[RMDB]
RNA sequence: GGGAACGACUCGAGUAGAGUCGAAAAGAAGGACCUGCGGUACAGGAGUCAGCCAUGUCUGUGCUGUGUGGAACCACCUGAUGACAUGGUUAACGAGGAAGACGAUGUGUUGACCGGCUGCCGUUUGCUGCGGGAGCAAAUUCGUUUGCUCCCGCAGAAAAGAAACAACAACAACAAC
Reactivity to DMS in 0.01 (KOAc 150mM, MgCl2 10mM, bicine 150mM(pH8.5), 24C), signal-to-noise 2, nucleotides 027 to 126: g020a120a110g010g000a160c050c020u000g000c000g050g050u000a120c050a080g010g020a140g020u000c020a010g000c010c000a040u010g000u000c000u000g000u000g050c140u000g000u020g040u010g030g010a070a190c220c090a010c040c030u020g000a130u000g000a080c060a040u000g010g000u000u020a020a080c050g000a110g030g010a100a100g000a030c010g010a100u000g020u010g030u000u000g030a250c040c020g010g000c090u000g040c010c030g000u000u000u010g030
Reactivity to 2A3 in 0.01 (KOAc 150mM, MgCl2 10mM, bicine 150mM(pH8.5), 24C), signal-to-noise 1, nucleotides 027 to 126: g080a060a080g090g070a100c020c050u030g020c010g020g000u100a000c020a040g070g040a080g050u060c020a010g000c010c010a010u000g000u000c010u030g200u120g180c070u040g090u030g020u120g170g020a070a060c070c000a030c000c030u070g080a110u210g000a010c010a050u020g010g000u000u010a060a000c030g020a030g030g040a100a020g050a010c080g090a080u140g130u060g050u110u030g000a010c000c000g010g010c050u030g000c010c000g030u040u090u090g000